[RMDB]
RNA sequence: GGGAACGACUCGAGUAGAGUCGAAAACUAAGUUCAGUGUUUAAAGAUCCUGAAUAAAGUCAUAUUUUUUCCUCUUAUCUCAGGCUGGAAAAAUCACUAAACCUAGACAACUUACCUGCUUAAGCAAACCGAUAUAUUUUUUCGAAAAUAUAUCGGUAAAAGAAACAACAACAACAAC
Reactivity to DMS in 0.01 (KOAc 150mM, MgCl2 10mM, bicine 150mM(pH8.5), 24C), signal-to-noise 2, nucleotides 027 to 126: c010u000a020a170g000u000u000c030a000g040u000g000u000u000u010a100a160a240g000a090u010c030c000u000g000a020a030u000a020a100a060g000u000c040a100u000a010u000u000u000u050u000u010c060c010u000c130u010u000a040u010c180u020c000a030g000g030c140u000g000g020a020a050a050a070a030u000c020a020c030u010a050a060a030c020c050u000a010g010a080c090a070a110c180u000u010a130c070c020u000g010c100u000u010a110a100g000c070a070a090
Reactivity to 2A3 in 0.01 (KOAc 150mM, MgCl2 10mM, bicine 150mM(pH8.5), 24C), signal-to-noise 2, nucleotides 027 to 126: c010u020a030a000g000u000u010c000a020g000u000g060u070u090u150a130a280a050g050a040u070c000c010u020g020a010a020u010a040a040a020g020u000c020a040u060a290u260u210u020u020u070u040c010c000u050c020u030u070a090u040c100u030c080a010g040g000c040u050g050g090a090a060a000a030a020u080c010a050c030u040a040a050a040c000c010u010a020g060a070c050a050a060c110u070u090a130c010c000u060g100c060u140u080a120a000g040c000a010a110